[RMDB]
RNA sequence: GGGAACGACUCGAGUAGAGUCGAAAAGAUAUGGACGGUUCAUGGGAGAGCCAGGUCGGAAACGACCUGAGCUCAUCGAUCAUGGCCGUCCUAAGUCAAAAGCCAUGCCAGUUCGCUGGCAUGGCAAGUUGUCAGUAAUGUUCGCAUUACUGACAACAAAAGAAACAACAACAACAAC
Reactivity to 2A3 in 0.01 (KOAc 150mM, MgCl2 10mM, bicine 150mM(pH8.5), 24C), signal-to-noise 4, nucleotides 027 to 126: g000a000u020a000u050g000g000a000c020g040g000u300u300c090a000u010g050g150g110a260g010a000g050c000c000a000g010g010u000c000g000g010a020a010a010c000g000a000c000c040u020g010a010g000c010u000c000a010u060c060g030a110u040c010a000u000g010g000c000c010g000u000c000c000u000a000a000g010u000c000a050a010a040a030g000c010c000a010u000g000c000c000a020g040u160u200c300g170c180u000g000g000c000a000u010g000g000c000a000a000
Reactivity to DMS in 0.01 (KOAc 150mM, MgCl2 10mM, bicine 150mM(pH8.5), 24C), signal-to-noise 4, nucleotides 027 to 126: g010a030u000a060u010g010g000a010c010g020g010u000u020c010a010u000g020g010g020a190g020a010g000c000c000a000g000g000u000c000g020g010a010a020a040c000g000a000c000c000u000g000a130g000c000u000c000a080u010c300g010a130u010c000a000u000g000g000c000c000g020u000c000c000u000a000a060g000u000c000a140a110a140a150g020c000c000a000u000g020c000c000a020g020u000u020c300g010c000u000g000g010c000a010u000g000g010c000a000a000

This 177-nucleotide RNA was probed chemically with 2A3 and DMS.
It was measured as part of the RMDB library TTRDES.
For 2A3 the reverse transcriptase was SuperScript II with manganese.
For DMS, 6,828 sequencing reads were counted.
For DMS the reverse transcriptase was MarathonRT.